[RMDB]
The record gives the reactivity of an RNA of 177 nucleotides to DMS and 2A3. Source: RMDB libraries RFM100 and RFMREP, as collected in RNAgym. Conditions: 150 mM KOAc, 10 mM MgCl2 and 150 mM bicine (pH 8.5), 24 C. For DMS the reverse transcriptase was MarathonRT. Reactivities are rounded to 0.1 and cut off at 0 and 3.
RNA sequence: GGGAACGACUCGAGUAGAGUCGAAAACCUAGUCUUUCGGGAGAUGUACGCAUACCCGGGAGAUAGGAAACUCCCGGAGGUGAAAAUCAAAGUGAAAACAGAUUUUAAACCCUCGGGAGACCAACAUAUUGAUGUACUACUUCGGUAGUACAUCAAUAAAAGAAACAACAACAACAAC
Reactivity to DMS in 0.01 (KOAc 150mM, MgCl2 10mM, bicine 150mM(pH8.5), 24C), signal-to-noise 2, nucleotides 027 to 126: c000c000u000a050g030u000c010u000u020u000c020g000g000g010a240g000a030u010g000u030a110c190g060c000a000u000a030c000c000c060g010g030g010a010g000a050u000a010g000g020a080a100a060c000u000c010c000c000g000g000a100g000g010u000g020a070a070a020a000u010c000a110a180a080g000u020g000a110a130a110a100c020a190g000a020u010u000u000u000a030a130a080c010c000c010u000c010g000g010g000a030g000a030c010c010a140a150c100a050u000
Reactivity to 2A3 in 0.01 (KOAc 150mM, MgCl2 10mM, bicine 150mM(pH8.5), 24C), signal-to-noise 8, nucleotides 027 to 126: c010c000u030a050g170u010c000u000u010u010c000g000g010g000a300g040a080u030g050u090a040c240g020c110a010u030a060c000c000c000g000g000g000a000g000a000u010a010g010g000a070a100a030c000u000c010c000c000g010g010a010g020g000u040g030a030a030a010a010u020c060a090a110a150g070u110g110a080a080a020a040c010a010g010a020u000u010u010u060a150a220a020c000c000c000u000c000g000g000g000a000g010a020c000c000a020a080c030a040u070